RNA sequence: GGGAACGACUCGAGUAGAGUCGAAAAUUGCCUAGGCAACCCUCCUUUCGUUUUAAUUUAUGUCGUGUGGUCGGUUCCUAGGCAACGCACAAGCAGAUACUCGAACCUAGCGGCCAAAUGGGGCGAGGUAUUCAAAUUUUGUCGAGCUUUACGCCCCCUACACAAGAGUAUUCGUACUCUUGUGUAGAAAAGAAACAACAACAACAAC
Reactivity to 2A3 in 0.01 (KOAc 150mM, MgCl2 10mM, bicine 150mM(pH8.5), 24C), signal-to-noise 4, nucleotides 027 to 156: u030u010g010c000c000u000a010g000g010c070a020a000c010c010c010u020c000c020u120u260u080c080g110u110u130u080u170a210a300u130u170u220a190u250g140u090c030g000u060g010u020g040g010u000c010g000g000u000u000c000c000u000a000g000g000c010a000a000c010g010c000a050c030a050a080g030c020a020g030a100u060a070c030u060c050g040a060a070c010c020u050a060g050c050g070g030c040c000a030a110a160u090g000g010g010g010c000g020a010g010g010u030a100u060u100c060a040a130a170u140u230u130u130g140u070c050g010a030g010c000u090u110u060a040c010g000c000c000c010c010
Reactivity to DMS in 0.01 (KOAc 150mM, MgCl2 10mM, bicine 150mM(pH8.5), 24C), signal-to-noise 1, nucleotides 027 to 156: u000u000g000c040c000u000a010g030g000c090a030a050c010c000c000u000c000c000u000u010u000c010g030u020u020u000u010a050a170u010u000u000a090u050g020u000c060g030u010g040u000g000g030u010c030g020g020u000u000c020c000u010a030g010g000c040a020a000c030g030c070a090c060a140a100g020c020a140g000a240u000a040c050u010c060g000a050a100c040c020u010a070g030c030g020g020c010c000a050a090a160u000g000g000g030g010c000g010a060g010g020u010a050u040u000c100a060a090a240u020u010u000u000g000u000c020g020a230g000c050u000u000u010a080c000g010c010c010c020c030